[RMDB]
RNA sequence: GGGAACGACUCGAGUAGAGUCGAAAAGAUCAGAAUAUUGGGUGUGUCUCUUCAUUCUAACAGUGUUAAUGAGAUAGAUUCUGAGCAACAUGAAAAUUAACCAGACUCACAAGCUUAGUUUGUGAUUUAUAGAUUGAAAAGAAGCUUAAUAUAUUCAGAUAAUCACGUCAUUCGUGACGUGAUUAUCAAAAGAAACAACAACAACAAC
Reactivity to 2A3 in 0.01 (KOAc 150mM, MgCl2 10mM, bicine 150mM(pH8.5), 24C), signal-to-noise 3, nucleotides 027 to 156: g060a060u110c070a030g060a120a020u060a020u060u050g010g020g010u080g030u040g110u060c000u010c000u010u040c020a020u030u000c020u030a080a120c040a080g020u020g010u170u020a030a050u050g010a020g030a110u070a120g100a080u110u030c050u160g090a060g060c020a010a080c010a020u150g070a120a090a020a030u030u020a010a010c010c010a010g060a080c020u010c010a030c000a010a000g020c070u180u140a030g030u030u030u020g000u010g000a010u000u020u010a020u010a010g000a010u030u050g010a000a040a010a040g010a050a000g010c000u050u030a120a010u070a020u030a100u150u100c040a010
Reactivity to DMS in 0.01 (KOAc 150mM, MgCl2 10mM, bicine 150mM(pH8.5), 24C), signal-to-noise 1, nucleotides 027 to 156: g010a160u030c050a150g010a090a080u000a040u010u000g000g020g020u000g030u000g010u000c010u030c000u000u000c000a040u010u000c030u000a070a220c180a150g010u010g020u010u000a030a020u000g010a220g030a190u010a110g010a160u010u000c010u000g010a180g000c010a030a060c030a100u020g010a070a100a100a080u000u000a040a080c020c040a230g020a110c120u000c010a020c000a020a090g000c100u000u000a090g020u010u000u010g040u000g010a040u000u000u000a100u020a040g010a010u000u000g000a020a010a030a010g020a050a210g010c020u000u000a010a060u010a110u020a120u010u000c050a100